[RMDB]
RNA sequence: GGGAACGACUCGAGUAGAGUCGAAAACGUUGCAACAACCCCGUGGUUUGGGCGCAGUGGGGCAAGGUAUUUGUCCGGUGCGCAGUGAAGCCACUGCAACAAAAAUCUGUACCCUUCGGGGUACAGACUAAAACAUUAUGUUCGCAUAAUGUUUUAGAAAAGAAACAACAACAACAAC
Reactivity to DMS in 0.01 (KOAc 150mM, MgCl2 10mM, bicine 150mM(pH8.5), 24C), signal-to-noise 6, nucleotides 027 to 126: c180g010u000u000g010c010a050a100c150a130a260c100c010c020c180g030u000g000g010u000u000u010g010g000g000c010g010c000a030g000u000g030g030g020g000c010a010a010g010g020u010a100u000u000u000g010u000c000c000g000g010u000g010c010g010c000a040g020u000g000a040a030g010c000c000a010c000u000g000c010a020a010c020a040a080a070a120a160u000c000u000g000u000a000c010c000c000u000u010c210g020g010g010g010u000a000c010a000g010a050
Reactivity to 2A3 in 0.01 (KOAc 150mM, MgCl2 10mM, bicine 150mM(pH8.5), 24C), signal-to-noise 6, nucleotides 027 to 126: c010g010u010u010g010c030a070a120c010a070a140c170c000c000c000g010u010g000g010u010u020u030g040g030g010c010g000c040a200g210u110g070g070g030g000c010a010a010g170g100u300a290u150u060u010g000u000c010c010g070g110u010g000c000g000c010a020g020u120g300a020a000g000c000c010a000c030u020g010c010a020a000c030a000a090a010a000a010u020c000u000g000u010a000c000c000c000u000u050c180g020g000g000g000u000a000c000a000g000a000